[RMDB]
RNA sequence: GGGAACGACUCGAGUAGAGUCGAAAAGUCUAUUCGUAGACAACGGUGAUAUGGAGUUGAAGAAGCGUCAUUGGCGACGAUCUCGGAAACGAGGGAGCCAUCUACAAUCAACCAACGCUUCUCCAACUCCUAAGUCUAAGAGAGUCUUCGGACUCAAGUUGAGAAAUUUCUUCGGAAAUUUCUCAACAAAAGAAACAACAACAACAAC
Reactivity to 2A3 in 0.01 (KOAc 150mM, MgCl2 10mM, bicine 150mM(pH8.5), 24C), signal-to-noise 2, nucleotides 027 to 156: g010u000c010u000a040u120u120c200g110u070a000g000a020c010a090a080c090g080g080u120g030a050u050a040u220g000g000a000g000u010u000g000a020a000g000a000a000g000c030g040u030c140a200u070u070g020g000c030g010a140c030g010a020u000c000u000c000g020g050a070a050a100c010g000a000g000g000g000a000g000c040c010a040u070c050u180a180c170a110a130u220c050a050a050c030c030a030a000c010g000c000u020u000c010u000c000c000a000a000c000u000c000c000u000a000a000g000u000c010u040a100a050g130a000g000a020g060u000c030u040u090c210g080g020a000c000u010c060a010a030

Chemical mapping of a 207-nucleotide RNA with 2A3. The reactions ran in a buffer of 150 mM KOAc, 10 mM MgCl2 and 150 mM bicine (pH 8.5), at 24 C. It was measured as part of the RMDB library RNAMAK.